This 177-nucleotide RNA was probed chemically with DMS and 2A3. For DMS the reverse transcriptase was MarathonRT. The RNA was probed in 150 mM KOAc, 10 mM MgCl2 and 150 mM bicine (pH 8.5) at 24 C.

[RMDB]
RNA sequence: GGGAACGACUCGAGUAGAGUCGAAAAGUCUGGAUCGAUCCAGCGGUGUUCGUACAGACAACUUACGACGUGCUCGCCGGCCCGUACAGCCCCUAGGUCUAAUUCCGGGCACGUCCUAUGGUCGGUCAUGGUGCAUGAGCUUCGGCUCAUGCACCAUAAAAGAAACAACAACAACAAC
Reactivity to DMS in 0.01 (KOAc 150mM, MgCl2 10mM, bicine 150mM(pH8.5), 24C), signal-to-noise 1, nucleotides 027 to 126: g000u000c020u000g000g000a210u000c000g040a000u000c000c000a110g000c190g030g000u030g000u000u000c110g000u000a180c000a300g000a000c080a090a020c000u000u010a030c300g000a000c050g000u000g000c010u050c000g040c300c200g130g010c000c010c090g010u000a070c120a300g030c000c030c000c100u020a160g000g030u000c050u000a110a300u000u000c290c000g000g000g000c010a000c050g000u040c000c020u000a020u000g000g000u000c120g110g000u000c010
Reactivity to 2A3 in 0.01 (KOAc 150mM, MgCl2 10mM, bicine 150mM(pH8.5), 24C), signal-to-noise 2, nucleotides 027 to 126: g010u030c010u020g030g010a130u160c040g010a030u040c070c000a080g130c080g050g050u170g000u000u020c040g010u070a050c030a040g000a000c010a000a100c080u020u140a000c040g000a020c000g040u020g000c000u010c030g030c000c010g010g030c010c020c030g020u020a120c140a030g040c000c010c000c010u080a040g000g040u010c010u030a100a160u200u010c090c010g000g000g000c010a020c010g000u040c000c000u170a160u150g010g000u020c040g010g010u030c020